The record gives the reactivity of an RNA of 177 nucleotides to 2A3 and DMS. It was measured as part of the RMDB library TTRDEL. For 2A3 the reverse transcriptase was SuperScript II with manganese. Reactivities are given for positions 27 through 126.

RNA sequence: GGGAACGACUCGAGUAGAGUCGAAAAGAUAUGGAAUUCUUCUUCAACAGCUAUGUCGGAAACGACUGUAGACAUGAAGUCGUGAUUCCUAAGUCAAAAGCUCUUUUAGGUUCGCCUAAAAGAGCAACACACUAAAAAACUUCGGUUUUUUAGUGUGAAAAGAAACAACAACAACAAC
Reactivity to 2A3 in 0.01 (KOAc 150mM, MgCl2 10mM, bicine 150mM(pH8.5), 24C), signal-to-noise 2, nucleotides 027 to 126: g010a020u050a030u170g000g000a010a010u020u000c000u010u000c010u000u030c050a160a120c040a120g000c020u040a000u050g010u030c000g000g030a070a030a060c010g020a010c040u210g060u040a010g040a050c050a150u140g010a010a010g000u010c010g090u140g050a000u000u020c000c010u020a080a030g020u040c020a010a000a070a180g000c000u000c000u040u000u000u000a010g010g010u040u050c270g100c040c000u000a000a000a010a000g000a000g000c000a000a000
Reactivity to DMS in 0.01 (KOAc 150mM, MgCl2 10mM, bicine 150mM(pH8.5), 24C), signal-to-noise 3, nucleotides 027 to 126: g000a040u000a300u010g000g000a020a020u000u000c000u000u000c010u000u000c000a040a070c250a130g000c010u000a030u000g010u000c000g010g000a110a130a150c000g010a020c000u010g030u000a010g010a020c050a150u000g010a020a010g000u000c010g000u000g000a010u000u000c000c000u000a040a140g000u000c020a070a110a130a180g000c010u000c000u000u000u000u000a010g000g010u000u010c240g020c000c000u000a010a000a010a000g000a010g010c000a010a060

For DMS the reverse transcriptase was MarathonRT.